[RMDB]
RNA sequence: GGGAACGACUCGAGUAGAGUCGAAAAGUCGGCCAAUGGAUUGAUAUGAUGGCGCGAAUGGAAGGCCCGGUGGCGACAACCAUUGGUAUCGUCUAUGCCUGUGACUGGGAGAUUGAGACCGGUAAACGGAUAGGGAUACUUUCGAGUAUCCCUAUCCAAAAGAAACAACAACAACAAC
Reactivity to 2A3 in 0.01 (KOAc 150mM, MgCl2 10mM, bicine 150mM(pH8.5), 24C), signal-to-noise 2, nucleotides 027 to 126: g010u030c010g010g050c000c000a030a030u050g040g040a060u020u140g050a040u070a080u300g150a070u090g000g020c060g000c010g120a080a070u120g060g040a100a120g030g020c000c010c010g060g000u100g030g030c040g010a010c020a030a020c000c010a010u040u040g020g030u060a090u110c000g040u000c030u030a060u120g020c000c000u160g020u060g040a000c020u050g040g030g040a160g040a060u070u210g080a070g030a130c020c020g050g000u080a080a050a050c030
Reactivity to DMS in 0.01 (KOAc 150mM, MgCl2 10mM, bicine 150mM(pH8.5), 24C), signal-to-noise 3, nucleotides 027 to 126: g010u000c010g010g000c000c010a050a030u000g020g000a140u000u020g010a110u010a080u000g020a100u010g020g000c030g000c030g000a060a090u000g010g010a150a100g000g000c050c010c080g010g030u000g020g020c020g010a060c070a070a140c020c020a010u000u010g010g010u000a050u000c020g020u010c010u000a080u000g000c010c000u010g030u010g000a050c060u010g000g030g010a080g010a160u000u010g000a150g020a120c040c000g000g000u020a060a080a080c200
Structure probing data (2A3 and DMS) for a 177-nucleotide construct. It was measured as part of the RMDB library OK2TST.